[RMDB]
RNA sequence: GGGAACGACUCGAGUAGAGUCGAAAACAACCAUGCAAGAAUGUGAAAUGUUAGGGAAUGAGAUUGGUCUGCCCAAACGCGUAGUCCAGGUGUGGUUCCAAAAUGCAAGGGCAAAGGAAAAGAAAUAACCUAGUACUGCUUUCGAGCAGUACUAGGUAAAAGAAACAACAACAACAAC
Reactivity to DMS in 0.01 (KOAc 150mM, MgCl2 10mM, bicine 150mM(pH8.5), 24C), signal-to-noise 2, nucleotides 027 to 126: c170a100a110c020c020a060u000g010c050a070a090g020a070a030u010g010u000g010a060a080a050u010g000u000u000a060g020g020g020a030a120u000g000a100g010a110u010u010g020g010u010c090u000g020c020c030c030a030a060a100c100g030c110g020u000a090g000u010c050c030a020g000g000u010g020u020g030g010u010u020c040c040a080a060a040a070u000g010c050a070a100g000g010g000c060a030a080a030g000g000a020a030a060a060g000a040a040a070u000a100
Reactivity to 2A3 in 0.01 (KOAc 150mM, MgCl2 10mM, bicine 150mM(pH8.5), 24C), signal-to-noise 1, nucleotides 027 to 126: c000a000a040c060c000a000u070g000c020a080a080g150a220a140u080g110u070g070a150a020a050u110g010u120u150a050g130g000g040a110a160u160g040a100g020a060u040u110g030g010u070c030u000g030c000c000c000a070a140a040c030g050c040g020u070a020g030u030c020c000a020g000g000u040g030u030g020g030u060u080c030c010a100a100a050a020u130g010c040a060a040g090g000g000c040a050a050a050g110g010a040a050a010a010g070a000a150a030u190a020